[RMDB]
RNA sequence: GGGAACGACUCGAGUAGAGUCGAAAAGAUAUGGAACGUUCUUUCUUCGUUGAAAUCGGAAACGAUGGAGAAGCCCGGAAGAGACGUUCCUAAGUCAAAGGCAGAUUUCCUUCGGGAAAUCUGCCAACAGUCUUAUUUGGUUCGCCAAAUAAGACUGAAAAGAAACAACAACAACAAC
Reactivity to DMS in 0.01 (KOAc 150mM, MgCl2 10mM, bicine 150mM(pH8.5), 24C), signal-to-noise 3, nucleotides 027 to 126: g000a040u000a290u010g000g000a020a020c000g000u010u000c040u000u010u000c030u010u000c080g020u010u010g000a160a120a010u000c010g010g010a120a080a110c000g000a010u010g000g000a300g000a040a100g020c300c230c130g000g000a040a040g010a040g000a010c000g000u000u000c000c000u010a000a070g010u010c040a080a090a070g010g000c010a000g010a030u000u000u000c000c000u000u000c240g040g020g000a010a000a000u000c000u000g000c000c010a010a020
Reactivity to 2A3 in 0.01 (KOAc 150mM, MgCl2 10mM, bicine 150mM(pH8.5), 24C), signal-to-noise 2, nucleotides 027 to 126: g000a010u040a010u140g000g000a000a000c000g040u080u060c020u080u140u010c060u240u220c060g170u080u020g030a060a010a000u020c000g000g000a020a020a000c030g000a020u030g000g030a110g010a110a060g190c180c300c280g260g010a050a000g050a010g010a010c000g000u010u020c000c000u020a060a000g030u020c040a060a080a140g000g000c010a000g000a010u000u020u000c000c010u090u140c300g000g000g010a000a000a000u010c000u000g000c000c010a000a000